Description:
Structure probing data (DMS and 2A3) for a 177-nucleotide construct. The DMS profile rests on 2,465 reads. Reactivities are given for positions 27 through 126. DMS adducts were read by reverse transcription with MarathonRT.
[RMDB]
RNA sequence: GGGAACGACUCGAGUAGAGUCGAAAAACUUAUUCAAUCUGGCGUAUUCUUUGAAAAUACGUAUCAACAUUUACGUCAUUUUGUUGAAGAAAAUUUAUUACAUCGCAGUUUUGACUAAUUACCAUGCGUAAUAGGGACAGUUCGCUGUCCCUAUUACAAAAGAAACAACAACAACAAC
Reactivity to DMS in 0.01 (KOAc 150mM, MgCl2 10mM, bicine 150mM(pH8.5), 24C), signal-to-noise 3, nucleotides 027 to 126: a110c220u000u000a020u000u000c010a010a030u000c010u000g020g030c030g010u000a050u000u000c040u000u000u000g000a020a040a030a010u000a030c070g010u000a030u000c140a100a100c280a100u000u010u000a000c020g010u000c150a020u010u000u000u020g010u020u000g000a010a020g000a020a040a090a120u010u000u040a090u020u020a100c140a050u010c060g020c030a040g000u000u000u010u010g000a030c090u000a020a060u000u000a170c030c010a080u000g010c200
Reactivity to 2A3 in 0.01 (KOAc 150mM, MgCl2 10mM, bicine 150mM(pH8.5), 24C), signal-to-noise 2, nucleotides 027 to 126: a000c020u050u020a020u020u020c000a000a000u010c010u000g220g020c000g020u060a060u040u000c030u020u050u080g010a000a000a010a050u040a080c030g020u030a030u020c040a030a170c020a070u090u060u010a010c000g010u030c050a020u000u010u020u110g070u030u030g010a010a030g060a050a130a030a020u120u200u130a070u030u090a070c030a030u140c010g060c060a000g000u060u000u080u070g010a010c010u010a040a000u090u140a060c040c010a030u130g050c020